[RMDB]
RNA sequence: GGGAACGACUCGAGUAGAGUCGAAAAGUGGGUGUUGAAGUGCAUGCGCCCAAUAUCCUUGCUGAAGUGCUUGGAGAACGCCCUGCUAAAUAUAUGGAUUCGCCAUUGGAAUACUACAGAUAUUACCUUAACCAAGGUUGCACCCCAAGACCCGGCACCAUCCUGGAAGUUUCGACUUCCAGGAUGGAAAAGAAACAACAACAACAAC
Reactivity to 2A3 in 0.01 (KOAc 150mM, MgCl2 10mM, bicine 150mM(pH8.5), 24C), signal-to-noise 1, nucleotides 027 to 156: g060u110g000g010g000u030g060u140u140g040a130a020g080u040g040c070a090u070g040c000g000c050c030c000a000a010u120a040u050c040c020u070u020g000c060u090g110a260a110g040u140g140c000u000u010g050g000a080g000a030a030c010g010c010c000c020u030g020c100u110a070a120a090u100a070u080a040u060g080g000a120u190u050c040g060c180c120a020u000u190g010g050a050a000u040a160c080u060a040c080a080g140a110u060a010u090u090a160c010c000u160u040a090a060c070c050a000a040g000g000u000u040g000c000a010c040c030c040c000a060a020g010a160c000c000c000g050g000c000a030
Chemical mapping of a 207-nucleotide RNA with 2A3.
For 2A3, 426 sequencing reads were counted.